[RMDB]
RNA sequence: GGGAACGACUCGAGUAGAGUCGAAAAUUAAAGGCCAUUCCCAGGCCAGGUAGCAGAGCGGAUAUAUAUAAUCUCUCGCCAUAUAUAGCUACCAAAGGCGAGAGGUUAUAUAUAUCCGCUCAAAAAAACAUGGAGAUAGUUUCGACUAUCUCCAUGUAAAAGAAACAACAACAACAAC
Reactivity to DMS in 0.01 (KOAc 150mM, MgCl2 10mM, bicine 150mM(pH8.5), 24C), signal-to-noise 1, nucleotides 027 to 126: u000u010a080a080a120g000g080c000c000a060u000u000c000c000c000a250g000g010c000c050a090g000g010u000a060g020c160a140g010a000g010c000g000g000a010u000a000u000a010u010a030u000a020a010u000c000u000c000u000c000g010c010c000a040u000a080u020a090u010a130g010c100u030a060c100c030a030a190a070g000g010c010g000a010g000a010g000g000u000u000a000u000a000u000a010u000a000u000c000c000g000c000u000c000a000a000a010a060a050a070
The data come from the RNA Mapping Database (RMDB), library M2PK90. An RNA of 177 nucleotides, treated with DMS and read out base by base. DMS adducts were read by reverse transcription with MarathonRT.